RNA sequence: GGGAACGACUCGAGUAGAGUCGAAAACUAGGCCGUUUUGAGGGACAGGUGAGGGACAGCUGCACAGAGGUCUGGGCACUACAGGUGGUGACAGCAGCCACGGGCUUGUCAGACUUUUCUGGCCCAGGACUGAAUCUCUAUUCGUAGAGAUUCAGUCAAAAGAAACAACAACAACAAC
Reactivity to DMS in 0.01 (KOAc 150mM, MgCl2 10mM, bicine 150mM(pH8.5), 24C), signal-to-noise 5, nucleotides 027 to 126: c060u000a110g020g010c030c060g000u010u000u010u000g010a110g000g020g000a110c120a060g000g000u010g010a120g010g010g000a090c090a070g000c050u000g030c080a090c150a080g010a070g010g000u000c010u000g000g010g000c050a060c100u000a080c140a060g010g030u000g000g010u000g000a080c070a070g020c110a130g020c020c040a040c090g000g000g000c050u010u010g010u000c030a050g010a080c100u000u000u010u000c050u010g000g000c010c020c030a120g000
Reactivity to 2A3 in 0.01 (KOAc 150mM, MgCl2 10mM, bicine 150mM(pH8.5), 24C), signal-to-noise 3, nucleotides 027 to 126: c020u060a080g020g070c020c030g060u010u040u120u200g080a050g010g040g030a040c040a040g060g000u100g080a110g010g010g010a010c030a030g020c050u060g020c040a030c010a090g100a030g000g030u020c020u030g020g030g000c040a020c060u170a060c060a070g140g050u040g040g030u020g060a040c030a020g090c030a000g000c060c010a040c030g040g050g000c030u050u050g010u030c010a010g030a150c000u100u130u070u020c040u040g010g000c000c020c000a030g040